[RMDB]
An RNA of 177 nucleotides, treated with 2A3 and DMS and read out base by base.
For DMS, 1,315 sequencing reads were counted.
DMS adducts were read by reverse transcription with MarathonRT.
The RNA was probed in 150 mM KOAc, 10 mM MgCl2 and 150 mM bicine (pH 8.5) at 24 C.
Reactivities are rounded to 0.1 and cut off at 0 and 3.
The 2A3 profile rests on 1,649 reads.

RNA sequence: GGGAACGACUCGAGUAGAGUCGAAAAUUAAAGCACGCGAAGCACGCGAAGCACAUGAAGCACAUGAAGCACUACAAGCAGUACAUGCACGGCAAGCAGUAGAAGCAGUACAAGCAGCCGAAAAAAAACACAAUACUGUGUUCGCACAGUAUUGUGUAAAAGAAACAACAACAACAAC
Reactivity to 2A3 in 0.01 (KOAc 150mM, MgCl2 10mM, bicine 150mM(pH8.5), 24C), signal-to-noise 1, nucleotides 027 to 126: u090u050a090a010a020g040c010a030c030g030c050g040a090a020g040c010a020c100g060c020g040a040a010g000c020a010c010a040u060g080a080a020g030c050a080c000a110u030g050a030a010g000c010a010c110u050a020c030a110a020g030c020a000g040u080a030c030a070u060g010c030a010c050g060g000c020a040a050g000c010a040g050u100a000g030a070a000g020c060a040g030u070a000c010a100a000g000c010a010g000c030c000g000a160a030a000a000a000a000a000
Reactivity to DMS in 0.01 (KOAc 150mM, MgCl2 10mM, bicine 150mM(pH8.5), 24C), signal-to-noise 2, nucleotides 027 to 126: u010u010a130a080a110g030c010a090c080g000c030g010a040a140g010c090a060c130g000c110g000a060a080g030c000a040c120a050u050g000a040a110g010c020a100c050a050u000g000a060a050g000c030a080c060u010a080c110a040a060g010c030a040g000u020a070c130a030u000g030c080a090c080g060g010c070a110a090g000c010a070g010u000a030g040a150a130g010c030a040g010u000a080c100a030a060g000c040a120g010c020c040g030a010a000a000a020a040a060a020